[RMDB]
RNA sequence: GGGAACGACUCGAGUAGAGUCGAAAAUUUGGUUCAGACAAAAAGGUUAUCGUUGCCUUGAAAGACGAUGUCUCUCUAUCGAAAGUGAAAUCCUUUAAACAGCCAAGCAAAGGAGUCUUGAUGCCAAAUCCAUCCCACCAUUCGUGGUGGGAUGGAUAAAAGAAACAACAACAACAAC
Reactivity to DMS in 0.01 (KOAc 150mM, MgCl2 10mM, bicine 150mM(pH8.5), 24C), signal-to-noise 2, nucleotides 027 to 126: u000u000u020g000g000u000u000c070a000g000a090c080a160a130a030a110a000g010g040u000u010a020u010c090g020u020u010g010c080c000u020u000g000a020a010a080g000a040c110g060a020u060g020u000c040u010c000u020c070u000a100u010c100g030a000a120a070g040u000g010a000a060a080u000c000c000u000u020u010a170a150a140c050a140g000c090c020a030a120g000c170a030a040a030g010g010a200g000u010c020u040u000g000a040u030g000c040c070a040a000
Reactivity to 2A3 in 0.01 (KOAc 150mM, MgCl2 10mM, bicine 150mM(pH8.5), 24C), signal-to-noise 3, nucleotides 027 to 126: u030u000u050g060g000u020u020c020a020g000a130c040a020a060a110a070a040g080g000u060u000a090u120c010g030u040u030g000c050c000u090u280g020a080a030a010g010a020c010g010a040u070g060u080c010u000c000u000c020u030a090u140c060g100a170a170a080g050u090g060a040a040a120u060c000c000u060u100u120a140a190a010c010a010g030c010c040a060a000g010c050a060a060a080g040g020a040g010u010c030u050u060g040a080u100g040c010c000a040a100